Structure probing data (2A3) for a 207-nucleotide construct. The data come from the RNA Mapping Database (RMDB), library OK3TST. Values are in units of 0.01, from 0 to 300, in steps of 10. For 2A3, 593 sequencing reads were counted.

RNA sequence: GGGAACGACUCGAGUAGAGUCGAAAACGCAUGCGAAAGCAUGCGGCUAUGCUAAUGCAUGGCGACCCCGAUCACGUUGACCUAGGGGCGUAUGUGGUUAUUAUUCCGCAUACGAUUACCAGUGUCUGUUAUUAUUCAGAUACAUGGACGUCAACUACAUGAUCCGUGACUUCGGUCACGGAUCAUGAAAAGAAACAACAACAACAAC
Reactivity to 2A3 in 0.01 (KOAc 150mM, MgCl2 10mM, bicine 150mM(pH8.5), 24C), signal-to-noise 1, nucleotides 027 to 156: c000g020c000a000u000g000c040g010a070a000a000g030c000a000u000g010c040g000g030c010u000a000u000g000c040u170a300a000u300g000c000a000u030g010g000c000g120a140c000c000c000c060g020a050u090c070a020c070g000u000u000g010a020c000c100u120a090g050g000g000g020c020g000u030a000u000g020u020g030g030u150u000a150u180u060a190u240u000c000c030g010c020a000u000a000c000g000a000u000u140a040c000c000a020g000u000g010u000c000u000g130u010u080a190u080u110a190u160u080c000a000g000a000u000a020c040a240u030g060g000a080c000g000u000c000a000a000c000u000a010